[RMDB]
RNA sequence: GGGAACGACUCGAGUAGAGUCGAAAAAAUUGAAAGGAAGUGUCGUUGAAUGGAAUUUAUUAACCUCACACCUCACGCAGUACACAUUAUGCCGCUCGGACCUGAAGGACAUGUCCGCACAAUCCCGUCAUCUGGCGAGGUGCGCGUAGCUACCGAAGCCUGUACACAGCUUCGGCUGUGUACAGGCAAAAGAAACAACAACAACAAC
Reactivity to 2A3 in 0.01 (KOAc 150mM, MgCl2 10mM, bicine 150mM(pH8.5), 24C), signal-to-noise 2, nucleotides 027 to 156: a000a000u200u100g010a080a030a010g040g050a070a050g010u010g030u060c060g020u030u070g050a060a040u100g040g030a050a050u090u050u040a130u090u180a050a040c000c000u050c000a000c010a000c030c000u010c030a020c030g050c030a020g050u120a030c050a020c010a110u100u170a040u210g000c000c030g080c060u030c040g040g000a030c000c000u060g030a060a050g000g000a020c010a040u070g060u020c040c030g000c010a020c000a040a030u030c050c000c000g030u020c020a120u000c050u090g010g020c010g030a030g000g010u030g000c040g010c010g100u020a010g000c020u020a070c000c000g000a070a000
Reactivity to DMS in 0.01 (KOAc 150mM, MgCl2 10mM, bicine 150mM(pH8.5), 24C), signal-to-noise 1, nucleotides 027 to 156: a100a170u000u000g010a090a110a180g020g040a130a150g020u010g070u000c010g000u000u010g000a080a120u000g000g010a150a160u000u000u000a050u030u030a100a110c040c000u000c040a030c070a080c040c030u000c000a060c070g010c050a110g000u000a130c070a060c080a060u000u000a110u010g000c040c030g000c040u000c030g010g040a120c010c020u000g000a250a110g030g010a070c040a080u010g060u010c060c020g000c000a040c090a050a050u000c000c000c000g160u010c010a140u000c080u010g040g000c060g030a080g040g010u000g000c080g040c020g000u000a090g010c040u000a130c000c020g000a130a270